Chemical mapping of a 177-nucleotide RNA with 2A3 and DMS. Values cover nucleotides 27 to 126. Source: RMDB library RFMREP, as collected in RNAgym. The 2A3 profile rests on 5,099 reads. The DMS profile rests on 7,457 reads.

[RMDB]
RNA sequence: GGGAACGACUCGAGUAGAGUCGAAAAGCAGGACUCUGGAUCAUGAAGGUGUUGAGGCCUCAAACUAGACAGGAAGUGGAGGGAUUCUGGAUGUUCCCUCGGCAAGAGGGUGCCACAUAGAACGUAGCCAUUAUAGCUACUUCGGUAGCUAUAAUGGAAAAGAAACAACAACAACAAC
Reactivity to 2A3 in 0.01 (KOAc 150mM, MgCl2 10mM, bicine 150mM(pH8.5), 24C), signal-to-noise 4, nucleotides 027 to 126: g040c030a020g000g030a020c010u000c030u060g040g020a060u090c020a060u160g120a130a050g060g020u080g090u150u130g060a040g020g030c000c000u020c010a070a090a030c050u050a040g040a090c030a030g000g070a090a020g040u060g060g040a060g030g030g000a020u100u000c020u060g100g020a060u080g030u050u050c000c000c000u000c020g030g040c090a090a030g010a010g040g000g020u020g000c000c000a060c020a050u150a050g060a070a010c070g030u070a050g040
Reactivity to DMS in 0.01 (KOAc 150mM, MgCl2 10mM, bicine 150mM(pH8.5), 24C), signal-to-noise 6, nucleotides 027 to 126: g020c080a060g010g000a080c040u010c040u010g010g000a060u000c070a090u000g000a110a080g010g000u000g000u000u010g010a100g020g000c030c020u000c060a060a060a090c100u010a070g020a100c100a060g000g000a070a050g010u000g010g010a070g010g000g000a110u000u000c040u000g010g010a140u000g010u010u000c010c000c000u000c030g000g030c140a080a100g000a030g000g010g010u000g010c040c060a060c100a100u000a080g000a050a060c130g010u010a110g010